[RMDB]
RNA sequence: GGGAACGACUCGAGUAGAGUCGAAAAGAUAUGGAAGGAUGCACUUCAACAGCCUGUGAGUCGGAAACGACUCCAGGACAUGAAGGGGUCCUUCCUAAGUCAAAAGAUCGAGGUUCGCCUCGAUCAACAUUAAUUGCUGGUUCGCCAGCAAUUAAUGAAAAGAAACAACAACAACAAC
Reactivity to 2A3 in 0.01 (KOAc 150mM, MgCl2 10mM, bicine 150mM(pH8.5), 24C), signal-to-noise 6, nucleotides 027 to 126: g010a010u050a020u110g000g010a000a000g030g020a030u130g270c170a130c300u030u020c080a280a170c060a170g080c010c000u160g120u250g090a000g000u010c010g000g040a050a040a050c000g010a000c000u000c000c000a000g010g000a000c020a180u300g010a010a000g000g010g030g000u000c000c000u000u000c000c000u000a000a000g000u000c010a020a000a120a150g010a000u000c000g000a000g010g050u090u110c300g130c040c000u000c010g010a000u020c000a000a000
Reactivity to DMS in 0.01 (KOAc 150mM, MgCl2 10mM, bicine 150mM(pH8.5), 24C), signal-to-noise 7, nucleotides 027 to 126: g010a040u010a300u000g000g010a030a010g010g010a020u000g010c070a160c000u000u000c010a060a110c300a230g010c010c000u000g000u020g010a020g020u000c000g000g000a080a080a150c000g010a000c000u000c000c010a000g010g000a010c060a160u000g000a020a020g010g000g010g000u000c000c000u000u000c000c000u000a010a060g000u000c040a100a100a160a140g010a010u000c010g010a030g010g010u000u020c290g020c000c000u000c000g010a000u000c000a080a140
The record gives the reactivity of an RNA of 177 nucleotides to 2A3 and DMS.